[RMDB]
RNA sequence: GGGAACGACUCGAGUAGAGUCGAAAACUCAGCGAGAGCACGGUGCGCCUGAUGCCGCACGCCCUCGUCAACAUGACGAAUGUGACGUCGCUGGAGGGCACGAUUGUGCUGCAUGGCACGAUGCCGCCUACUCGAUAGCCUUCGGGCUAUCGAGUAGAAAAGAAACAACAACAACAAC
Reactivity to DMS in 0.01 (KOAc 150mM, MgCl2 10mM, bicine 150mM(pH8.5), 24C), signal-to-noise 2, nucleotides 027 to 126: c050u000c000a150g010c110g010a100g000a050g000c030a050c020g000g000u010g000c020g020c080c060u000g000a090u010g020c140c050g040c010a020c090g010c030c030c030u000c020g000u060c100a100a040c060a120u040g040a080c100g000a120a060u010g010u010g020a120c020g030u020c040g000c040u000g010g030a040g000g020g040c000a100c100g010a040u020u050g000u020g000c000u040g000c100a120u020g020g050c020a010c070g020a070u000g000c000c020g000c060
Reactivity to 2A3 in 0.01 (KOAc 150mM, MgCl2 10mM, bicine 150mM(pH8.5), 24C), signal-to-noise 4, nucleotides 027 to 126: c010u000c020a010g040c030g060a110g000a020g110c010a020c040g050g030u070g030c070g060c030c010u050g000a080u090g030c050c000g000c020a000c010g020c000c020c000u010c000g070u010c000a090a120c070a160u250g000a010c030g010a150a070u210g060u100g100a070c030g020u100c070g010c070u060g080g040a010g010g020g000c030a010c130g120a120u060u240g020u010g000c000u000g000c010a050u140g050g000c010a000c100g050a050u080g010c000c000g020c020